[RMDB]
Notes: Source: RMDB library RFM100, as collected in RNAgym. Structure probing data (2A3 and DMS) for a 177-nucleotide construct. The RNA was probed in 150 mM KOAc, 10 mM MgCl2 and 150 mM bicine (pH 8.5) at 24 C. DMS adducts were read by reverse transcription with MarathonRT.
RNA sequence: GGGAACGACUCGAGUAGAGUCGAAAAUAUUGUUGUAUACAAUGCUCCUUCGGGUAGCGUUGUAUUCAUUUGUGGGAAUUUGUUUUCAAGUUCCCCUAUUACUGUGAGCAAAUUAGAGUGUUCAAAGCGAAAAAUAAACGUUCGCGUUUAUUUUUCGAAAAGAAACAACAACAACAAC
Reactivity to 2A3 in 0.01 (KOAc 150mM, MgCl2 10mM, bicine 150mM(pH8.5), 24C), signal-to-noise 1, nucleotides 027 to 126: u270a080u100u190g050u020u030g000u000a000u000a000c000a000a000u010g000c000u000c000c000u070u060c160g110g030g050u160a000g010c000g000u010u000g000u000a000u000u010c000a000u060u140u110g100u120g000g020g020a010a020u000u000u040g150u000u130u130u220c000a000a020g000u000u000c020c000c000c010u090a060u090u090a100c060u040g010u050g100a080g060c010a010a000a060u040u120a140g050a050g130u050g030u010u000c000a060a040a000g080
Reactivity to DMS in 0.01 (KOAc 150mM, MgCl2 10mM, bicine 150mM(pH8.5), 24C), signal-to-noise 1, nucleotides 027 to 126: u020a110u000u000g000u000u000g000u020a020u000a000c000a010a000u000g030c010u000c000c000u000u120c290g030g040g000u010a000g000c000g000u000u010g000u000a000u000u010c050a050u000u060u000g000u010g010g010g040a000a000u010u010u000g030u010u070u000u010c000a000a040g000u000u000c000c010c000c030u000a000u050u010a090c160u020g010u000g000a090g000c020a010a020a050u000u070a150g010a130g000u000g000u000u000c020a070a200a060g000